RNA sequence: GGGAACGACUCGAGUAGAGUCGAAAAGUGAACGAUCUCGGUUGUUUCUCUGAAGGCAUGAUCACCGCGUCCGAUGCGGAAGUUCGUGCUUCCGUCGAACGCGAAAGUCGGACGGCGGCCAUGAGUCAAUAUGUUUAAGGCUUCGGCCUUAAACAAACUGGAUCCAUACUUUCGAGUAUGGAUCCAGAAAAGAAACAACAACAACAAC
Reactivity to 2A3 in 0.01 (KOAc 150mM, MgCl2 10mM, bicine 150mM(pH8.5), 24C), signal-to-noise 1, nucleotides 027 to 156: g140u090g070a120a040c050g020a130u030c030u030c120g030g000u010u000g000u010u020u000c090u000c090u070g070a070a030g000g070c000a000u000g010a020u120c050a010c000c000g010c000g020u000c000c000g000a000u070g010c030g000g000a000a010g020u080u280c160g160u300g030c000u000u000c000c000g000u030c040g070a210a030c060g020c000g170a070a000a000g030u010c000g000g000a000c030g060g040c000g010g010c030c000a010u020g010a000g080u020c020a030a050u070a040u180g000u000u000u000a000a000g000g010c010u060u060c290g090g010c000c000u000u000a000a000a010c000a000a000a010
Conditions: 150 mM KOAc, 10 mM MgCl2 and 150 mM bicine (pH 8.5), 24 C. Structure probing data (2A3) for a 207-nucleotide construct. For 2A3, 797 sequencing reads were counted.